An RNA of 170 nucleotides, treated with 2A3 and DMS and read out base by base. 2A3 is a SHAPE reagent: it acylates the 2'-hydroxyl of flexible nucleotides of all four kinds. The data come from the RNA Mapping Database (RMDB), library 15KLIB.
RNA sequence: GGGAACGACUCGAGUAGAGUCGAAAACAAACACAUCUUAGCCACUAUGUUCUUAACAUAGAUUGGUUGUGGUUUGCAUUUGAGACUGGUUUGGCAUACAUGCUCUAUACCUCGGCCUUCAACUGGUACACAUACUGAUUCGUCAGUAUGAAAAGAAACAACAACAACAAC
Reactivity to 2A3 in 0.01 (KOAc 150mM, MgCl2 10mM, bicine 150mM(pH8.5), 24C), signal-to-noise 9, nucleotides 027 to 129: c010a000a030a000c060a000c010a120u060c070u200u230a020g010c000c000a010c000u000a000u010g020u070u070c170u260u300a060a010c000a010u010a050g030a120u030u130g020g000u030u060g010u030g020g060u020u020u050g050c100a140u040u050u170g130a100g020a040c050u040g040g030u060u060u060g030g010c010a040u070a120c040a070u210g030c020u030c020u100a080u080a100c000c020u040c050g050g000c010c000u050u070c020a060a040c050u050g020g030u080a040c060a000
Reactivity to DMS in 0.01 (KOAc 150mM, MgCl2 10mM, bicine 150mM(pH8.5), 24C), signal-to-noise 9, nucleotides 027 to 129: c020a040a040a040c050a050c060a080u050c120u050u050a030g020c010c010a050c010u000a020u000g010u010u030c230u040u070a050a020c010a010u000a020g010a120u040u010g010g010u000u020g010u020g000g020u000u000u010g020c110a080u020u030u030g020a060g000a080c030u000g020g020u020u020u020g010g020c020a030u020a080c120a080u040g020c040u020c050u030a050u020a090c030c020u030c090g010g010c020c030u010u010c060a040a060c100u020g010g000u000a050c130a140